The record gives the reactivity of an RNA of 177 nucleotides to DMS and 2A3. It was measured as part of the RMDB library TTRDES. DMS (dimethyl sulfate) methylates the pairing face of unpaired adenines and cytosines. For DMS the reverse transcriptase was MarathonRT.
RNA sequence: GGGAACGACUCGAGUAGAGUCGAAAAGAUAUGGAUCCAGUGGCUCGGCUGAUGACCAACAUCGGAAACGAUGUUGCAAGGCCUCCACGGAUCCUAAGUCAAACUCCCGAGCUUCGGCUCGGGAGAAGCUCAGUACAGUGUUCGCACUGUACUGAGCAAAAGAAACAACAACAACAAC
Reactivity to DMS in 0.01 (KOAc 150mM, MgCl2 10mM, bicine 150mM(pH8.5), 24C), signal-to-noise 2, nucleotides 027 to 126: g000a050u000a300u000g000g000a000u010c040c020a110g040u000g000g000c300u000c300g000g010c000u000g010a020u000g000a110c300c020a040a030c000a000u000c000g000g000a250a090a110c010g000a000u000g000u000u000g040c040a100a100g000g080c000c000u010c000c000a000c010g010g000a020u000c000c020u000a030a070g020u000c000a140a250a280c000u000c000c020c030g000a030g000c040u000u010c170g020g000c000u000c000g000g000g010a000g010a000a020
Reactivity to 2A3 in 0.01 (KOAc 150mM, MgCl2 10mM, bicine 150mM(pH8.5), 24C), signal-to-noise 2, nucleotides 027 to 126: g040a000u100a030u210g000g010a020u010c040c150a230g010u020g030g060c170u220c300g050g010c000u070g010a300u110g000a090c070c010a000a010c000a020u010c010g000g120a040a070a070c000g000a000u000g010u000u000g030c020a100a220g000g010c000c010u030c000c000a010c000g010g000a000u000c000c000u010a060a000g040u000c050a090a070a210c010u030c030c000c020g000a000g000c160u300u300c300g190g000c020u000c090g000g000g000a000g000a000a000